[RMDB]
RNA sequence: GGGAACGACUCGAGUAGAGUCGAAAAUAGCUGACGUUCGCGUCAGCUAAAAGCACCAAAACCUCCUGGCGGUGCGGCGCCCGCCCCGCCGGGAAGGCCGCCAACUCGAUGGGUUCGCCCAUCGAAACCAUGCUGAAUGUUUCGACAUUCAGCAUGGAAAAGAAACAACAACAACAAC
Reactivity to DMS in 0.01 (KOAc 150mM, MgCl2 10mM, bicine 150mM(pH8.5), 24C), signal-to-noise 2, nucleotides 027 to 126: u010a020g000c000u020g040a000c000g020u000u000c090g030c000g010u000c010a000g020c020u000a010a030a050a150g010c180a150c010c000a060a050a130a300c010c000u010c000c010u000g020g000c020g000g000u000g000c020g030g040c300g000c200c130c010g050c020c060c000c000g000c020c010g010g010g010a010a030g030g000c070c060g010c100c070a040a110c190u000c000g000a000u000g020g000g000u000u030c160g020c000c000c000a000u000c000g000a000a100a110
Reactivity to 2A3 in 0.01 (KOAc 150mM, MgCl2 10mM, bicine 150mM(pH8.5), 24C), signal-to-noise 2, nucleotides 027 to 126: u030a000g020c000u010g000a010c000g030u040u060c260g020c010g130u010c000a000g000c010u000a000a000a000a000g030c030a060c060c000a020a040a080a150c000c000u020c000c000u000g000g010c010g000g010u000g030c020g010g020c150g120c040c190c010g020c000c010c000c010g000c000c010g000g020g010a000a010g000g000c060c000g080c050c010a050a090c030u010c020g010a000u000g000g000g050u050u050c170g130c010c000c000a000u000c000g000a000a000a010

Description
An RNA of 177 nucleotides, treated with DMS and 2A3 and read out base by base. The 2A3 profile rests on 2,898 reads. Values cover nucleotides 27 to 126.